RNA sequence: GGGAACGACUCGAGUAGAGUCGAAAAGGGGCUCCUUGGUGAUUCAUGAUAACUUAACGAAUCGCAUGGCCUUGCGCCGGCGAUGGUUCAUUCAAAUUUCUGCCCUAUCAACUUUCGAUGGUAGGAUAGCACAAUACUGAUUCGUCAGUAUUGUGCUAAAAGAAACAACAACAACAAC
Reactivity to DMS in 0.01 (KOAc 150mM, MgCl2 10mM, bicine 150mM(pH8.5), 24C), signal-to-noise 3, nucleotides 027 to 126: g020g000g000g020c040u000c070c030u000u010g020g010u000g000a100u000u010c070a090u010g000a120u000a070a090c180u010u010a050a080c090g010a060a030u010c010g000c010a050u040g020g010c000c000u010u000g010c120g030c000c010g000g010c010g010a010u000g010g010u000u000c090a080u010u000c060a070a070a130u000u000u000c030u000g020c130c000c030u000a020u000c010a020a100c060u010u010u000c260g000a160u000g000g010u000a020g000g000a300u010
Reactivity to 2A3 in 0.01 (KOAc 150mM, MgCl2 10mM, bicine 150mM(pH8.5), 24C), signal-to-noise 5, nucleotides 027 to 126: g020g010g000g000c000u000c000c000u030u050g060g030u090g050a090u060u060c020a020u070g110a080u130a250a080c100u180u090a120a030c060g060a070a010u000c000g000c040a130u210g020g000c000c030u070u250g020c190g000c030c000g000g000c010g040a040u030g030g030u060u030c030a040u080u040c030a030a110a170u060u020u000c020u030g060c020c000c000u000a010u020c020a000a070c070u090u290u200c110g080a080u060g000g020u000a000g010g040a050u080